Chemical mapping of a 177-nucleotide RNA with 2A3 and DMS. It was measured as part of the RMDB library OK2TST. For DMS, 10,302 sequencing reads were counted.
[RMDB]
RNA sequence: GGGAACGACUCGAGUAGAGUCGAAAAGGGAUCGCGCUCCGUUCGGCCAGGUAACCCAGUCUCGCGUCGGCGACAGCUACUUCACCAGCGCCGUUCCACCCGAGUGCUCGGCGGCGCUGCUGUUCAAGCUGUUAUAGCUAUUCGUAGCUAUAACAGCAAAAGAAACAACAACAACAAC
Reactivity to 2A3 in 0.01 (KOAc 150mM, MgCl2 10mM, bicine 150mM(pH8.5), 24C), signal-to-noise 4, nucleotides 027 to 126: g060g010g030a040u070c030g020c010g000c040u010c010c010g020u050u060c030g040g020c020c010a020g050g030u060a080a070c010c010c000a020g050u030c010u020c060g030c010g030u040c030g020g040c020g030a030c020a010g020c010u060a070c040u100u110c030a040c060c000a010g000c000g000c000c010g030u130u000c030c020a070c010c030c010g070a100g050u130g030c070u050c070g010g000c000g000g000c040g000c000u010g000c020u020g000u030u090c050a060a030
Reactivity to DMS in 0.01 (KOAc 150mM, MgCl2 10mM, bicine 150mM(pH8.5), 24C), signal-to-noise 6, nucleotides 027 to 126: g010g000g010a060u010c090g010c080g020c040u000c030c040g000u000u010c050g020g020c030c030a070g000g010u000a080a150c070c020c020a120g010u000c040u000c070g030c050g020u000c040g010g010c030g010a050c060a060g010c040u010a050c120u000u000c060a070c160c020a020g000c020g020c000c010g000u000u010c060c050a080c090c040c070g010a100g020u000g010c070u000c080g000g010c010g000g010c010g010c010u000g000c080u000g010u000u000c110a100a170